[RMDB]
RNA sequence: GGGAACGACUCGAGUAGAGUCGAAAAUACAAACGAGAUAUGAAGCGGCGUGCGCGGCGUAUCAUGCAGGCGAGGGAGGAAUACCUUGCUAGGAAGGCAGAGGGCGUUAGCUUCGGGGAAGGAGGGAGCAUCAGUAGGACUUCGGUCCUACUGAUGCAAAAGAAACAACAACAACAAC
Reactivity to DMS in 0.01 (KOAc 150mM, MgCl2 10mM, bicine 150mM(pH8.5), 24C), signal-to-noise 1, nucleotides 027 to 126: u000a190c130a050a120a040c160g060a070g040a100u040a180u020g000a010a000g000c010g000g000c040g020u000g020c030g110c000g060g000c040g110u050a020u010c000a050u030g010c020a270g000g030c000g010a040g000g000g030a100g040g060a260a110u000a100c000c000u000u030g010c020u000a060g080g000a160a160g000g000c110a060g000a300g010g000g000c020g000u030u030a000g090c120u000u000c040g000g000g000g070a180a050g030g000a180g000g000g000a070
Reactivity to 2A3 in 0.01 (KOAc 150mM, MgCl2 10mM, bicine 150mM(pH8.5), 24C), signal-to-noise 2, nucleotides 027 to 126: u180a000c040a010a190a000c210g040a050g010a110u060a040u250g030a090a010g050c000g070g000c000g010u020g050c190g000c060g100g000c000g050u060a110u130c070a010u200g040c010a000g110g000c000g040a040g090g000g000a080g000g060a180a000u110a170c010c000u030u000g000c000u000a010g000g170a050a120g100g000c040a010g090a210g110g020g000c010g000u100u040a050g040c050u120u160c020g000g000g000g000a190a000g040g070a130g000g000g000a040